The record gives the reactivity of an RNA of 207 nucleotides to DMS and 2A3.
[RMDB]
RNA sequence: GGGAACGACUCGAGUAGAGUCGAAAAAAUUUCAAAUUUUUUGCCGUAAUGGUAGAAACCGUUCUUGGCGAGCGUCUCGCGAUUGUCCCUGUAGUGUGUACGUGAAGUUUUAAAUUUGGGAAAGGAUUGUUUGCGUAGCGCUUCGUUUAGGAAUAGCGUAUGUCUGUUAAUUCGUUAACAGACAUACAAAAGAAACAACAACAACAAC
Reactivity to DMS in 0.01 (KOAc 150mM, MgCl2 10mM, bicine 150mM(pH8.5), 24C), signal-to-noise 1, nucleotides 027 to 156: a040a090u000u010u010c060a060a050a050u000u000u000u000u000u000g020c000c020g000u000a120a120u000g020g010u000a050g000a070a100a090c040c090g010u010u000c030u010u000g020g020c000g000a120g000c040g010u010c050u000c050g010c000g030a090u000u010g010u020c010c030c000u000g000u000a090g020u000g000u010g030u010a080c050g020u000g010a060a100g000u020u010u010u000a030a070a150u010u000u010g000g000g010a090a100a180g000g000a090u010u000g010u000u000u000g060c030g060u000a110g010c040g010c020u000u000c020g030u010u000u000a030g000g000a030a070u010a050g010c110
Reactivity to 2A3 in 0.01 (KOAc 150mM, MgCl2 10mM, bicine 150mM(pH8.5), 24C), signal-to-noise 3, nucleotides 027 to 156: a000a030u300u260u100c220a180a150a100u130u070u020u030u060u050g040c010c000g120u160a120a060u220g020g010u020a040g030a060a080a020c050c000g030u020u000c010u020u050g010g000c000g000a010g000c000g050u070c030u000c050g010c000g060a070u010u110g010u020c000c010c040u020g010u090a070g070u060g030u040g070u120a020c040g060u070g070a040a030g030u040u080u160u280a130a140a090u150u120u130g060g020g000a080a040a000g060g020a030u030u160g090u130u080u300g010c000g020u040a000g000c000g000c000u110u060c020g030u020u070u180a000g000g000a040a030u030a060g090c070
Overview: For 2A3 the reverse transcriptase was SuperScript II with manganese. DMS adducts were read by reverse transcription with MarathonRT.